Record summary: This 177-nucleotide RNA was probed chemically with DMS and 2A3. Source: RMDB library M2PK50, as collected in RNAgym. Conditions: 150 mM KOAc, 10 mM MgCl2 and 150 mM bicine (pH 8.5), 24 C. High DMS reactivity at an A or C suggests that its Watson-Crick edge is free. For DMS the reverse transcriptase was MarathonRT.
RNA sequence: GGGAACGACUCGAGUAGAGUCGAAAACGCUAUAGAUUCGUCUAUAGCGACUCCUACCCGCCGGCCGGUGCGCGGGGUAGGUGACGCAAACCACCGUGCGAAAUGUACUGGUUUUCGAACCAGUAAAAGUCUUAUUUUCUUUCGAGAAAAUAAGACUAAAAGAAACAACAACAACAAC
Reactivity to DMS in 0.01 (KOAc 150mM, MgCl2 10mM, bicine 150mM(pH8.5), 24C), signal-to-noise 4, nucleotides 027 to 126: c020g020c000u000a000u000a010g000a020u000u010c240g020u000c000u000a000u000a000g020c000g010a110c100u000c010c000u000a080c070c050c000g020c050c040g000g010c050c050g010g010u000g010c300g010c010g010g000g010g010u000a020g000g010u000g000a070c100g000c080a050a170a080c050c010a060c020c000g010u010g020c010g010a090a070a070u000g010u000a010c000u000g000g020u000u000u000u000c160g000a010a020c000c000a020g000u000a010a040a110
Reactivity to 2A3 in 0.01 (KOAc 150mM, MgCl2 10mM, bicine 150mM(pH8.5), 24C), signal-to-noise 4, nucleotides 027 to 126: c000g000c000u000a010u010a010g030a020u040u040c160g020u000c080u000a010u000a010g010c010g010a000c000u000c000c000u010a030c000c010c030g230c040c020g170g030c020c050g050g080u090g020c060g000c010g030g040g020g010u020a020g000g050u060g070a050c050g000c100a060a040a060c030c020a020c020c010g070u140g040c020g040a120a060a050u170g020u040a010c000u000g030g030u020u010u030u080c160g060a010a010c000c000a000g010u010a020a050a000